[RMDB]
The record gives the reactivity of an RNA of 177 nucleotides to DMS and 2A3.
RNA sequence: GGGAACGACUCGAGUAGAGUCGAAAACUAGUGCCAUUCGUGGCACUAGAAGGGGUCCAGCCUGGAAAGGCUGGAGGUAUUGGAAUGGUCGGGCCGCCAAUCAAGGUACGCUAUUCGUAGCGUACAAAGCAGGAUGCAUAUUCGUAUGCAUCCUGCUAAAAGAAACAACAACAACAAC
Reactivity to DMS in 0.01 (KOAc 150mM, MgCl2 10mM, bicine 150mM(pH8.5), 24C), signal-to-noise 2, nucleotides 027 to 126: c010u000a010g000u000g010c000c000a040u000u010c190g010u000g000g000c020a000c000u000a000g010a130a130g010g000g000g000u010c000c000a000g000c000c010u000g030g050a130a130a010g010g000c010u000g000g000a010g030g000u010a050u000u000g010g000a030a070u000g000g000u000c080g000g010g020c030c130g000c020c030a020a010u000c150a180a130g020g030u000a000c000g000c000u000a020u000u010c210g010u010a020g020c000g000u000a000c000a050a040
Reactivity to 2A3 in 0.01 (KOAc 150mM, MgCl2 10mM, bicine 150mM(pH8.5), 24C), signal-to-noise 1, nucleotides 027 to 126: c000u000a000g000u000g020c000c000a020u010u020c250g120u070g010g000c000a000c010u010a000g000a010a010g030g000g010g010u000c000c000a020g030c000c000u040g130g120a220a070a020g020g010c000u000g000g010a000g000g010u120a040u040u000g000g020a040a030u040g010g100u200c050g030g000g000c020c000g000c000c020a010a000u000c040a030a020g150g010u010a000c000g000c000u010a010u000u090c170g080u040a000g000c000g000u000a000c000a040a040
The reactions ran in a buffer of 150 mM KOAc, 10 mM MgCl2 and 150 mM bicine (pH 8.5), at 24 C.